[RMDB]
RNA sequence: GGGAACGACUCGAGUAGAGUCGAAAAGAUAUGGACUUAGUGGAGUUGAUGCGAUCGGUAACUAUCUGCUCGGAAACGAGCAGACGAAUUACGCGAUCGCAUCAACUAUGAAGCUAAGUCCUAAGUCGAGGAUUAAAAAGUUCGCUUUUUAAUCCUCAAAAGAAACAACAACAACAAC
Reactivity to 2A3 in 0.01 (KOAc 150mM, MgCl2 10mM, bicine 150mM(pH8.5), 24C), signal-to-noise 1, nucleotides 027 to 126: g070a020u120a130u150g000g010a000c000u000u000a000g020u010g030g080a020g000u000u020g000a000u010g010c000g020a000u000c030g000g010u020a010a000c000u010a020u070c000u000g000c000u040c020g040g000a060a080a090c000g010a000g000c030a000g040a000c010g030a240a300u060u020a120c290g000c010g300a000u000c000g040c000a010u010c010a000a000c010u000a010u000g000a000a000g010c010u010a000a000g000u000c000c000u000a030a000g000u010c040
Reactivity to DMS in 0.01 (KOAc 150mM, MgCl2 10mM, bicine 150mM(pH8.5), 24C), signal-to-noise 3, nucleotides 027 to 126: g010a120u020a300u010g000g010a040c000u000u000a010g000u000g010g010a000g010u000u000g010a000u000g000c000g010a000u000c000g030g010u010a010a000c150u000a210u010c000u000g010c000u000c000g000g000a120a170a260c000g010a040g000c000a010g000a010c030g030a040a070u000u000a000c000g030c000g010a010u000c000g000c000a000u000c000a000a000c000u010a110u020g000a150a260g000c000u000a000a020g000u000c000c000u000a000a080g010u010c090